[RMDB]
RNA sequence: GGGAACGACUCGAGUAGAGUCGAAAACAGAACUGGAUGGGCCGUGUGCUUAACCAGGACAAGAUCUCCUUCUCUCCAACGUUGUUGCCAACUCAUGAUUCUCCUAACCUGUGCGUGGAGAGACGUGCUACCAUAUAGGUGUUCGCACCUAUAUGAACUUAUUCUCAGUAUUCGUACUGAGAAUAAGAAAAGAAACAACAACAACAAC
Reactivity to 2A3 in 0.01 (KOAc 150mM, MgCl2 10mM, bicine 150mM(pH8.5), 24C), signal-to-noise 3, nucleotides 027 to 156: c050a040g050a080a050c000u030g010g050a090u040g080g070g030c060c060g300u280g110u220g090c000u030u020a040a060c000c000a000g020g080a010c080a000a120g050a160u030c030u030c080c000u050u040c020u000c000u000c030c040a090a090c090g030u000u000g000u030u030g020c030c040a060a030c060u040c080a070u040g080a210u140u030c030u050c030c050u080a090a140c030c070u090g100u140g050c010g030u020g040g000a020g000a000g000a020c040g030u030g010c020u100a110c040c060a010u000a000u000a010g020g010u010g060u070u050c300g050c060a010c020c000u000a000u000a000u010g010a010a010
Reactivity to DMS in 0.01 (KOAc 150mM, MgCl2 10mM, bicine 150mM(pH8.5), 24C), signal-to-noise 2, nucleotides 027 to 156: c060a100g000a100a110c010u000g020g000a180u000g010g000g030c000c020g020u010g010u000g040c010u000u010a050a120c030c020a050g020g010a170c060a090a110g010a120u000c050u000c010c030u000u000c030u000c010u010c030c020a090a130c080g040u010u000g000u000u000g000c020c030a050a110c040u010c000a050u000g020a100u010u000c020u020c020c010u000a080a060c030c040u000g010u000g010c020g000u000g040g010a030g000a020g000a060c060g040u000g030c080u010a130c080c010a020u000a010u000a010g000g030u000g020u000u010c290g040c010a000c010c000u000a010u000a000u000g000a060a130